[RMDB]
RNA sequence: GGGAACGACUCGAGUAGAGUCGAAAAAGCGUAGCGGUACGCCGCUACGCAAGGCGCAUUUGAACUGUAUUGUACGCCUUGCAUAAAGCAAAAGUACUAAAAAAACGUGCCGUUACGUCGGCACGAAAAAACAUCCAUUGGUUCGCCAAUGGAUGAACACUUUAAACUCGUUCGCGAGUUUAAAGUGAAAAGAAACAACAACAACAAC
Reactivity to DMS in 0.01 (KOAc 150mM, MgCl2 10mM, bicine 150mM(pH8.5), 24C), signal-to-noise 1, nucleotides 027 to 156: a080g020c030g010u000a030g000c060g000g020u010a110c150g040c020c030g010c010u000a000c020g030c000a010a010g000g000c000g040c010a080u000u000u020g010a100a160c080u000g010u000a220u010u000g010u000a030c010g000c000c000u010u000g000c060a100u000a030a060a150g010c010a050a120a070a160g010u020a180c060u020a000a000a010a130a050a070a220c020g000u000g000c020c010g000u060u000a110c240g020u000c020g040g000c000a020c010g010a000a020a050a050a050a040c010a010u000c010c000a000u000u000g010g000u020u000c300g000c030c000a000a010u020g000g010a000u000g010a000a100
Reactivity to 2A3 in 0.01 (KOAc 150mM, MgCl2 10mM, bicine 150mM(pH8.5), 24C), signal-to-noise 4, nucleotides 027 to 156: a000g030c020g010u000a000g000c010g000g000u040a060c230g050c040c010g000c000u000a000c010g010c000a010a000g000g000c000g010c040a070u060u100u240g120a180a080c080u110g050u200a100u150u080g020u020a020c000g000c010c000u000u010g000c010a080u100a230a140a050g040c020a010a040a000a000g050u060a050c110u210a030a020a010a060a030a010a030c010g000u010g000c010c010g040u070u110a100c100g060u090c000g050g000c000a000c000g010a000a000a010a000a000a000c010a000u000c000c000a000u000u010g030g010u020u020c090g030c050c000a000a000u000g000g000a000u000g000a000a000